[RMDB]
RNA sequence: GGGAACGACUCGAGUAGAGUCGAAAACACACAAGGUUCGCCUUGUGUGCAAGUAUAGACGAAUACUACCGUAGAAGUAUUCAGGUCACAUAACUACGGAAAUGGCGUUCUGCUUCGGCAGAACGAAGUAUAUGGACAGAUUCGUCUGUCCAUAUACAAAAGAAACAACAACAACAAC
Reactivity to DMS in 0.01 (KOAc 150mM, MgCl2 10mM, bicine 150mM(pH8.5), 24C), signal-to-noise 9, nucleotides 027 to 126: c000a010c010a000c010a020a010g010g010u000u010c230g020c000c000u000u010g010u000g010u000g010c050a040a080g010u000a090u010a110g000a110c100g000a020a010u000a010c010u000a130c020c010g010u000a010g010a170a030g010u000a010u000u000c010a090g020g010u000c070a080c140a080u010a100a120c010u000a010c010g000g010a180a080a090u010g020g000c000g000u000u000c000u000g000c000u000u010c210g030g000c000a000g000a010a000c000g010a010a070
Reactivity to 2A3 in 0.01 (KOAc 150mM, MgCl2 10mM, bicine 150mM(pH8.5), 24C), signal-to-noise 9, nucleotides 027 to 126: c010a000c000a000c000a000a000g040g010u040u070c150g120c050c000u000u000g000u000g000u000g000c010a040a030g060u090a100u100a240g100a030c050g010a010a000u000a010c010u080a300c000c010g010u010a010g020a130a000g010u010a020u020u030c030a020g100g090u110c060a050c020a270u190a240a090c020u010a000c010g020g090a030a060a080u200g200g010c010g000u000u010c000u000g000c000u030u060c210g110g000c000a000g000a000a000c000g000a000a010